[RMDB]
RNA sequence: GGGAACGACUCGAGUAGAGUCGAAAAUCCGAGCGCGCCGAUACGUUACAUGCGAUUCGCAAGUCGCACAAGGAGUUCGGGCAUAUCCAAGAAGUGAUCGUGCAGAACUUCCGCGCCAAGGAACACACAUGAAAAGUACAUUCGUGUACUUUUCAUGAAAAGAAACAACAACAACAAC
Reactivity to DMS in 0.01 (KOAc 150mM, MgCl2 10mM, bicine 150mM(pH8.5), 24C), signal-to-noise 9, nucleotides 027 to 126: u000c010c010g010a210g010c050g020c010g020c070c060g010a120u010a060c150g010u010u010a080c190a140u000g010c010g000a070u000u010c250g020c220a110a100g010u000c020g010c010a030c110a150a090g010g000a020g010u000u000c010g010g010g010c010a020u000a020u000c010c030a220a180g010a140a100g010u010g010a020u000c120g030u000g010c020a230g000a040a020c010u000u000c000c020g010c020g020c010c050a090a200g010g000a040a060c130a100c200a150
Reactivity to 2A3 in 0.01 (KOAc 150mM, MgCl2 10mM, bicine 150mM(pH8.5), 24C), signal-to-noise 9, nucleotides 027 to 126: u000c000c000g010a040g000c050g000c010g000c040c050g060a080u100a250c100g070u120u080a050c050a070u070g010c010g040a070u080u090c090g000c190a080a050g020u000c000g000c010a020c040a040a030g020g000a010g010u000u010c020g030g170g000c010a010u020a000u000c010c020a100a100g210a170a030g210u190g200a030u140c140g020u020g000c010a010g000a000a000c000u030u000c010c010g000c000g000c010c010a070a070g040g000a050a030c090a000c000a000

Chemical mapping of a 177-nucleotide RNA with DMS and 2A3. For 2A3 the reverse transcriptase was SuperScript II with manganese. The RNA was probed in 150 mM KOAc, 10 mM MgCl2 and 150 mM bicine (pH 8.5) at 24 C. 2A3 is a SHAPE reagent: it acylates the 2'-hydroxyl of flexible nucleotides of all four kinds. DMS adducts were read by reverse transcription with MarathonRT. Reactivities are rounded to 0.1 and cut off at 0 and 3.